[RMDB]
RNA sequence: GGGAACGACUCGAGUAGAGUCGAAAAUAAAAAAUCAGAGGCAAGCUCGCUUGCCUCUGAUUUUUUAUUUGACGAAUGUCCGGAUAUGAGCAAGAAGCACCUAAGUGCGGAUUGCGAAUAUACGGAGUGACUGUCCCUACUUCGGUAGGGACAGUCAAAAAGAAACAACAACAACAAC
Reactivity to DMS in 0.01 (KOAc 150mM, MgCl2 10mM, bicine 150mM(pH8.5), 24C), signal-to-noise 1, nucleotides 027 to 126: u000a000a000a020a000a000a020u050c010a040g000a070g000g000c000a020a000g000c020u020c300g010c040u000u000g010c100c000u020c000u000g000a000u120u000u000u000u000u000a000u000u000u000g000a040c060g010a200a070u020g000u000c000c000g000g000a010u000a020u000g000a300g000c070a000a020g010a300a240g020c040a000c000c260u040a090a110g050u000g000c000g010g000a300u010u000g000c000g000a300a000u040a000u010a020c010g000g020a000g010

The record gives the reactivity of an RNA of 177 nucleotides to DMS. Values cover nucleotides 27 to 126. It was measured as part of the RMDB library RFM100.